[RMDB]
RNA sequence: GGGAACGACUCGAGUAGAGUCGAAAACUGCUUCAUCAAAUACGAGAUUAGGUAUUUUGACCUGAGGCUCCUUGCACGAGUUCUGGCGAAAGCAUGACACCGCGCUGUGCCCCUGGAGAAUUCCGCGGCAAGGAGAGUAUUUCGAUACUCUCCUUGCAAAAGAAACAACAACAACAAC
Reactivity to 2A3 in 0.01 (KOAc 150mM, MgCl2 10mM, bicine 150mM(pH8.5), 24C), signal-to-noise 6, nucleotides 027 to 126: c060u070g000c000u030u020c020a080u010c010a020a020a060u110a040c050g050a070g130a300u140u150a180g040g120u020a040u020u160u030u060g060a050c020c040u050g010a010g040g010c010u040c010c000u050u090g050c050a040c060g050a060g050u070u050c030u050g040g010c030g080a090a050a000g050c060a030u080g030a030c030a000c060c010g030c010g000c040u030g040u050g050c000c010c000c020u040g020g020a070g020a070a110u110u000c030c040g050c020g120
Reactivity to DMS in 0.01 (KOAc 150mM, MgCl2 10mM, bicine 150mM(pH8.5), 24C), signal-to-noise 3, nucleotides 027 to 126: c110u010g020c020u000u000c040a070u010c010a020a010a030u040a010c050g020a120g030a150u050u020a070g000g000u010a000u010u030u020u010g010a060c160c100u000g000a030g000g000c000u030c040c010u000u000g000c050a060c090g010a060g000u010u010c010u020g000g010c010g000a090a070a060g010c050a110u000g000a100c100a060c070c050g020c030g000c040u000g000u020g000c020c000c000c020u010g000g000a070g010a070a080u000u000c010c010g000c270g010
Source: RMDB library OK1LIB, as collected in RNAgym. This 177-nucleotide RNA was probed chemically with 2A3 and DMS. Values are in units of 0.01, from 0 to 300, in steps of 10. The 2A3 profile rests on 4,817 reads. Reactivities are given for positions 27 through 126. The DMS profile rests on 5,700 reads. Conditions: 150 mM KOAc, 10 mM MgCl2 and 150 mM bicine (pH 8.5), 24 C.